Source: RMDB library OK1LIB, as collected in RNAgym. This 177-nucleotide RNA was probed chemically with 2A3.
[RMDB]
RNA sequence: GGGAACGACUCGAGUAGAGUCGAAAAAGAUGCGGAUCAUGUUCGUGUUUCCUAUCCGGGCAGAGCAAAUCCCUAACGUCGACGGAAAAGAAAGUUUGGAACAUUGAGCAUCAUGCUGCAUAAUAUAGCUGGUACGGUAGUUCGCUACCGUACCAGCAAAAGAAACAACAACAACAAC
Reactivity to 2A3 in 0.01 (KOAc 150mM, MgCl2 10mM, bicine 150mM(pH8.5), 24C), signal-to-noise 2, nucleotides 027 to 126: a000g090a000u000g000c000g000g030a050u000c000a000u050g040u000u000c000g000u000g000u000u060u030c000c000u040a100u020c000c000g000g080g030c050a090g080a050g070c080a030a000a250u100c040c040c030u090a090a010c000g050u010c000g110a040c010g090g000a000a230a000a020g280a000a070a000g140u060u180u240g050g000a000a000c000a000u080u250g010a000g000c000a000u010c000a000u100g030c000u000g000c000a000u060a120a180u280a160u080a030
The RNA was probed in 150 mM KOAc, 10 mM MgCl2 and 150 mM bicine (pH 8.5) at 24 C. The 2A3 profile rests on 648 reads.